[RMDB]
RNA sequence: GGGAACGACUCGAGUAGAGUCGAAAAUAAGGGUUCCUGGGUCAAGCUGAUCUGCCCAGGGUAAGUCGGGACCUAAGGCGAGGCCGACAGGCGUAGUCGAUGGAUAACCGGUUGAUAUUCCGGUACCCAAUCUUACCCAGUUCGCUGGGUAAGAUUGAAAAGAAACAACAACAACAAC
Reactivity to DMS in 0.01 (KOAc 150mM, MgCl2 10mM, bicine 150mM(pH8.5), 24C), signal-to-noise 6, nucleotides 027 to 126: u010a130a150g010g000g010u000u010c010c010u000g010g000g000u000c090a090a090g000c170u010g000a100u000c050u000g010c020c020c010a070g000g000g010u000a040a070g010u010c030g010g000g000a150c010c020u010a140a200g000g010c010g010a180g000g000c030c010g010a100c300a070g000g020c020g000u000a300g000u000c020g000a140u000g000g000a100u010a090a120c000c000g010g010u010u000g000a150u010a190u000u010c020c000g020g010u000a080c050c020
Reactivity to 2A3 in 0.01 (KOAc 150mM, MgCl2 10mM, bicine 150mM(pH8.5), 24C), signal-to-noise 3, nucleotides 027 to 126: u170a050a050g030g010g010u080u050c000c000u010g020g010g020u190c140a090a020g060c140u160g170a180u130c030u060g020c000c000c000a010g000g000g000u010a000a030g040u020c010g000g020g080a080c010c020u040a080a020g020g000c020g010a030g070g000c000c010g030a090c080a110g020g000c010g000u000a010g000u010c010g000a030u050g010g000a020u060a150a090c000c000g000g040u020u060g080a100u050a100u240u020c010c000g010g010u040a050c010c010